[RMDB]
RNA sequence: GGGAACGACUCGAGUAGAGUCGAAAAAUAAGAAGCGGACGUGUGAUCUGAUUCGCUGUCUAAUUUGAAUCACUAGUUUUCAAUUGAAAACAUUGGAGCGUUUGGAGAUCAGCGACUUAAGAGUUAAAUACUGGUGAUACUUCGGUAUCACCAGUAUAAAAGAAACAACAACAACAAC
Reactivity to 2A3 in 0.01 (KOAc 150mM, MgCl2 10mM, bicine 150mM(pH8.5), 24C), signal-to-noise 4, nucleotides 027 to 126: a010u220a060a020g170a120a020g060c010g040g020a030c000g060u120g050u050g140a030u040c030u040g020a100u010u010c000g000c000u010g150u020c020u040a090a070u110u090u220g080a110a060u060c050a040c130u080a040g030u000u000u110u100c060a150a280u090u300g050a070a040a000a000c080a040u000u080g070g030a040g020c040g060u010u070u060g130g070a040g010a030u060c030a030g010c000g030a030c010u060u060a070a030g080a040g100u050u120a110a200
Reactivity to DMS in 0.01 (KOAc 150mM, MgCl2 10mM, bicine 150mM(pH8.5), 24C), signal-to-noise 3, nucleotides 027 to 126: a100u030a070a020g000a130a120g030c040g010g020a010c010g030u010g010u040g020a050u000c020u010g000a120u020u000c010g020c000u000g000u010c010u060a060a060u020u010u020g010a080a060u010c110a070c110u020a090g010u010u020u000u000c010a300a120u010u040g000a040a040a010a000c030a120u020u020g000g000a050g000c040g020u040u000u000g010g020a040g000a060u020c030a050g000c020g010a060c040u000u000a050a060g000a150g010u030u030a060a070